An RNA of 207 nucleotides, treated with DMS and 2A3 and read out base by base.
Conditions: 150 mM KOAc, 10 mM MgCl2 and 150 mM bicine (pH 8.5), 24 C.
[RMDB]
RNA sequence: GGGAACGACUCGAGUAGAGUCGAAAAAAAGAUGGUGAGCUAUGUGUGUGUUGAUUGAAGGGAUGCGAAAGUGUUCUGGAGGAUCUAAGCCGUUCUGACGUGCAACUCGAUGGCAUGACAUGUGCAUAGGGGCGAAAGACCAAACGAACCAUCUGGUCAUCUAAGUGGGGUUCGCCCCACUUAGAUGAAAAGAAACAACAACAACAAC
Reactivity to DMS in 0.01 (KOAc 150mM, MgCl2 10mM, bicine 150mM(pH8.5), 24C), signal-to-noise 1, nucleotides 027 to 156: a080a150a070g030a060u020g020g010u010g000a160g040c050u000a000u060g030u030g050u000g010u000g040u010u000g000a150u020u010g030a300a130g020g000g020a070u000g030c040g000a090a040a250g030u000g000u000u000c010u010g050g020a300g000g000a030u000c030u010a110a110g000c040c000g020u010u000c060u010g010a080c090g030u000g000c080a070a110c000u000c060g010a090u000g010g010c010a140u010g000a080c050a030u000g010u000g010c010a040u000a100g010g000g000g000c000g010a100a120a180g000a100c000c040a000a130a060c040g000a120a030c000c010a110u000c000u000g030g030u020
Reactivity to 2A3 in 0.01 (KOAc 150mM, MgCl2 10mM, bicine 150mM(pH8.5), 24C), signal-to-noise 2, nucleotides 027 to 156: a010a000a000g030a020u030g010g010u020g010a040g010c050u040a050u040g030u000g000u000g010u010g010u050u050g060a100u030u070g010a050a040g010g010g000a000u030g010c020g050a100a050a030g020u030g010u010u030c010u040g010g060a060g000g070a010u030c020u070a050a050g000c000c010g060u090u070c100u130g060a040c020g110u140g050c040a060a080c020u040c070g040a040u050g010g000c030a020u030g020a040c010a030u080g020u030g010c010a010u010a040g040g000g010g020c070g030a120a030a010g030a060c020c000a080a060a010c030g040a010a000c050c000a000u010c000u000g030g050u020